[RMDB]
RNA sequence: GGGAACGACUCGAGUAGAGUCGAAAAGAUAUGGACCCCGUCAACAGCGUUUGGGUCGGAAACGACCUGACGACAUGACGGCGUCCUAAGUCAAAGGCUAUGCAUUGCUUCGGCAAUGCAUAGCCAAGGUUAGACCAGAGUUCGCUCUGGUCUAACCAAAAGAAACAACAACAACAAC
Reactivity to 2A3 in 0.01 (KOAc 150mM, MgCl2 10mM, bicine 150mM(pH8.5), 24C), signal-to-noise 1, nucleotides 027 to 126: g010a000u040a020u090g000g000a000c020c000c000c000g000u000c010a130a170c080a200g250c030g020u120u290u300g020g000g030u010c020g000g000a020a020a000c010g010a010c000c000u000g010a010c010g080a300c070a170u030g010a030c020g000g010c000g020u020c000c000u000a000a030g010u020c040a000a070a220g030g000c000u000a000u000g010c000a020u030u000g000c000u090u160c300g090g000c010a020a000u010g000c000a000u000a000g010c000c000a000a000
Reactivity to DMS in 0.01 (KOAc 150mM, MgCl2 10mM, bicine 150mM(pH8.5), 24C), signal-to-noise 1, nucleotides 027 to 126: g000a010u000a030u030g000g000a010c000c300c000c000g000u000c000a020a300c300a110g000c000g000u000u000u010g050g000g000u030c000g000g010a020a000a060c000g010a010c030c010u000g000a000c000g010a050c140a080u000g030a010c000g000g030c260g000u000c000c000u040a000a060g000u000c000a170a120a130g010g000c000u000a000u000g000c010a000u000u000g010c000u000u000c210g010g010c000a010a010u000g000c000a000u000a000g020c000c000a000a000
This 177-nucleotide RNA was probed chemically with 2A3 and DMS. The data come from the RNA Mapping Database (RMDB), library TTRDEL. The RNA was probed in 150 mM KOAc, 10 mM MgCl2 and 150 mM bicine (pH 8.5) at 24 C. The 2A3 profile rests on 1,809 reads. For DMS, 944 sequencing reads were counted. DMS adducts were read by reverse transcription with MarathonRT. DMS (dimethyl sulfate) methylates the pairing face of unpaired adenines and cytosines.